[RMDB]
RNA sequence: GGGAACGACUCGAGUAGAGUCGAAAAGUCUAGCGAUUUAGGGAUCCGAUCCGGGUAGCAGAACUCAACUGCAUGAGUAAACACGCAAGUCGCGUAUUGGCCGACCGGCCAAGGAUCUGCUAGACGACAUCAUGCGCCAUUUCGAUGGCGCAUGAUGAAAAGAAACAACAACAACAAC
Reactivity to 2A3 in 0.01 (KOAc 150mM, MgCl2 10mM, bicine 150mM(pH8.5), 24C), signal-to-noise 1, nucleotides 027 to 126: g000u000c010u000a000g020c000g100a060u060u030u300a160g090g000g010a000u030c000c010g020a020u030c030c000g020g000g070u070a030g020c010a020g040a090a040c030u030c090a070a130c040u090g000c060a050u040g040a060g130u050a050a150a070c060a010c010g000c050a160a120g270u210c080g010c000g000u000a050u030u150g150g000c010c010g000a100c000c000g000g030c000c000a010a020g000g000a000u000c020u040g000c000u000a000g010a020c000g010a000
Reactivity to DMS in 0.01 (KOAc 150mM, MgCl2 10mM, bicine 150mM(pH8.5), 24C), signal-to-noise 1, nucleotides 027 to 126: g000u000c000u000a000g000c000g000a180u000u000u010a210g040g010g010a010u000c000c000g000a290u000c000c020g010g000g010u000a110g000c010a100g000a080a120c030u000c110a050a080c080u000g000c160a100u000g020a120g030u000a120a060a100c070a010c030g000c010a150a120g000u000c080g030c000g000u000a110u000u000g010g060c010c040g080a080c010c000g000g000c060c180a040a110g020g000a030u010c010u000g000c000u000a010g000a060c000g000a210
The data come from the RNA Mapping Database (RMDB), library OK2TRN. Chemical mapping of a 177-nucleotide RNA with 2A3 and DMS. For DMS, 803 sequencing reads were counted. High DMS reactivity at an A or C suggests that its Watson-Crick edge is free.